[RMDB]
RNA sequence: GGGAACGACUCGAGUAGAGUCGAAAAACCACGGUAAACAAAACCUUGCUUUUGCCUGUUUUCCAUUGUGUACAGGCGGUUACCUUUUGUAAGGUAACCACACAGGCGCAGGUCCUGAAAUCGUGAUCAAAUACAAUCAGUUCGCUGAUUGUAUUUGAAAAGAAACAACAACAACAAC
Reactivity to DMS in 0.01 (KOAc 150mM, MgCl2 10mM, bicine 150mM(pH8.5), 24C), signal-to-noise 3, nucleotides 027 to 126: a120c090c010a020c010g010g000u000a030a100a210c170a020a020a010a020c000c000u000u020g050c080u000u000u000u000g010c000c000u000g010u000u000u010u000c020c030a180u010u010g020u000g010u000a010c020a020g010g020c020g000g010u000u000a000c000c000u000u000u000u010g020u010a030a030g010g000u000a000a010c000c000a060c300a090c040a000g000g010c090g010c010a000g010g000u010c000c010u000g000a060a040a010u000c010g020u000g000a160u010
Reactivity to 2A3 in 0.01 (KOAc 150mM, MgCl2 10mM, bicine 150mM(pH8.5), 24C), signal-to-noise 6, nucleotides 027 to 126: a010c010c000a000c010g020g020u040a010a040a030c010a000a020a020a010c000c010u080u230g020c040u180u210u250u300g000c000c010u030g060u050u110u160u090c050c090a220u190u300g040u040g020u170a010c000a000g000g000c040g030g020u000u000a000c010c000u030u070u090u250g260u300a000a000g000g000u000a000a000c000c000a010c010a000c000a010g010g000c040g000c040a010g000g020u090c000c000u000g000a030a010a010u020c020g010u010g020a030u030

Notes:
Source: RMDB library VIROID, as collected in RNAgym. An RNA of 177 nucleotides, treated with DMS and 2A3 and read out base by base. Conditions: 150 mM KOAc, 10 mM MgCl2 and 150 mM bicine (pH 8.5), 24 C. For 2A3, 10,495 sequencing reads were counted. The DMS profile rests on 4,014 reads. High DMS reactivity at an A or C suggests that its Watson-Crick edge is free.